[RMDB]
RNA sequence: GGGAACGACUCGAGUAGAGUCGAAAAUUCCGAGCGAAGAGCCGAACCGGGAAGAGGAAGCGCCCGAGAGGGAGCCAAUGCCAAAGAGGUGGGGAUCGUCGGAAGGUAUCGUCCCAAUGACCAAGAGCUAUGUUAAGUUCUUCGGAACUUAACAUAGAAAAGAAACAACAACAACAAC
Reactivity to 2A3 in 0.01 (KOAc 150mM, MgCl2 10mM, bicine 150mM(pH8.5), 24C), signal-to-noise 2, nucleotides 027 to 126: u020u000c010c020g010a080g020c040g060a090a110g040a070g300c020c020g030a070a020c020c030g040g030g010a070a100g060a080g110g060a060a030g100c080g070c020c000c000g040a060g000a020g010g010g000a000g000c000c010a020a040u090g000c000c000a030a100a020g120a110g050g000u080g010g030g020g040a040u020c000g010u010c000g000g000a000a010g050g020u100a050u170c070g020u060c000c000c030a020a090u200g040a080c040c000a040a030g040a000g130
Reactivity to DMS in 0.01 (KOAc 150mM, MgCl2 10mM, bicine 150mM(pH8.5), 24C), signal-to-noise 2, nucleotides 027 to 126: u030u000c020c020g020a140g010c030g000a050a050g010a280g030c010c000g010a100a140c050c040g010g000g010a120a090g000a290g010g010a210a160g000c100g060c020c010c010g000a190g000a290g020g030g010a070g000c010c080a020a130u010g000c000c050a020a070a100g000a130g010g010u010g010g000g010g010a130u010c030g010u010c020g000g000a030a000g010g010u000a100u010c130g000u000c020c000c000a170a080u000g000a020c160c120a060a070g020a160g010

The data come from the RNA Mapping Database (RMDB), library 15KREP.
The record gives the reactivity of an RNA of 177 nucleotides to 2A3 and DMS.
2A3 adducts were read by reverse transcription with SuperScript II with manganese.
For 2A3, 1,144 sequencing reads were counted.